[RMDB]
RNA sequence: GGGAACGACUCGAGUAGAGUCGAAAAGAUCUGCGCCGAUCCGAAACGCUAGCAAACAGCCCGCAUCAUGUCGUCUCCUAACUUCGACGUGGUGAAAUACUGAGCUUGUGCGAGUAAGCCUGUUAGCAAUAGAUCAGAACGUUCGCGUUCUGAUCAAGUGCAAAGCUAUCUUCGGAUAGCUUUGCACAAAAGAAACAACAACAACAAC
Reactivity to 2A3 in 0.01 (KOAc 150mM, MgCl2 10mM, bicine 150mM(pH8.5), 24C), signal-to-noise 2, nucleotides 027 to 156: g040a040u000c010u060g050c070g010c000c030g020a040u000c050c000g040a000a130a000c030g000c020u090a040g040c010a060a070a210c020a050g030c010c020c020g000c000a000u010c000a000u020g000u000c010g040u020c060u120c110c160u140a160a130c110u070u050c020g020a000c000g000u000g000g010u020g020a070a070a000u130a010c020u040g020a020g060c010u080u080g060u050g020c060g020a040g140u060a110a000g000c000c020u010g010u070u100a000g050c000a090a170u050a120g030a000u000c000a000g000a000a000c000g050u070u010c080g000c000g040u020u000c060u000g000a000u000c000a000a010
An RNA of 207 nucleotides, treated with 2A3 and read out base by base. The reactions ran in a buffer of 150 mM KOAc, 10 mM MgCl2 and 150 mM bicine (pH 8.5), at 24 C. The 2A3 profile rests on 886 reads. For 2A3 the reverse transcriptase was SuperScript II with manganese.